[RMDB]
The record gives the reactivity of an RNA of 177 nucleotides to DMS. Conditions: 150 mM KOAc, 10 mM MgCl2 and 150 mM bicine (pH 8.5), 24 C. DMS adducts were read by reverse transcription with MarathonRT.
RNA sequence: GGGAACGACUCGAGUAGAGUCGAAAAGAUAUGGACGAAGUCGAUAAGAUGCUAUCGGAAACGAUAGGCAUCUUUUGACGACUGAGUCCUAAGUCAAAAUCGAACUUCCCUUCGGGGAAGUUCGAAAUCAUUGUCUGUCCUUCGGGACAGACAAUGAAAAAGAAACAACAACAACAAC
Reactivity to DMS in 0.01 (KOAc 150mM, MgCl2 10mM, bicine 150mM(pH8.5), 24C), signal-to-noise 1, nucleotides 027 to 126: g020a020u000a190u000g020g000a000c030g000a240a030g020u000c000g000a180u000a040a010g000a000u000g010c000u010a010u000c000g010g000a060a080a100c010g000a000u000a040g000g010c040a010u000c000u000u000u000u000g040a230c010g000a010c000u000g000a300g010u000c000c000u000a010a070g010u000c020a070a100a070a180u000c000g000a000a000c010u000u000c000c000c010u000u000c250g020g000g010g000a010a010g010u000u000c000g000a010a050a110